[RMDB]
RNA sequence: GGGAACGACUCGAGUAGAGUCGAAAAGAAUCAUGGGAUGUCGGCGUGACUUUUGACUAUUGUGCAUGUCCGCUUAUUGACUCUAAUAAACUACUGUUGAAGUGGAGGUGGGAUAGUGGCGCGCUAACAUAGUCCGCAAAUUCGUUUGCGGACUAUGAAAAGAAACAACAACAACAAC
Reactivity to 2A3 in 0.01 (KOAc 150mM, MgCl2 10mM, bicine 150mM(pH8.5), 24C), signal-to-noise 3, nucleotides 027 to 126: g080a020a030u190c070a050u170g030g050g020a080u120g070u160c020g020g020c020g080u130g110a150c040u050u070u020u190g090a020c020u060a010u090u220g090u120g100c000a010u000g040u030c000c000g000c020u020u040a060u010u030g020a010c000u000c010u030a060a050u080a120a080a000c000u120a020c030u080g050u040u060g040a000a020g010u000g000g020a020g010g000u030g030g000g010a040u040a020g010u010g000g020c020g000c000g010c020u000a040a000
Reactivity to DMS in 0.01 (KOAc 150mM, MgCl2 10mM, bicine 150mM(pH8.5), 24C), signal-to-noise 4, nucleotides 027 to 126: g010a060a090u030c070a060u000g000g020g000a050u000g010u030c060g000g030c030g010u010g000a070c010u010u020u010u030g030a100c090u030a060u020u020g000u040g000c020a020u010g020u010c010c020g000c020u000u000a050u010u020g030a040c020u000c060u000a050a100u030a040a070a110c150u020a070c110u020g010u010u020g000a050a090g000u010g000g000a100g000g010u020g000g000g000a060u000a020g000u010g000g030c020g030c050g010c040u000a010a190

An RNA of 177 nucleotides, treated with 2A3 and DMS and read out base by base. The reactions ran in a buffer of 150 mM KOAc, 10 mM MgCl2 and 150 mM bicine (pH 8.5), at 24 C. For 2A3 the reverse transcriptase was SuperScript II with manganese. Values cover nucleotides 27 to 126. DMS (dimethyl sulfate) methylates the pairing face of unpaired adenines and cytosines.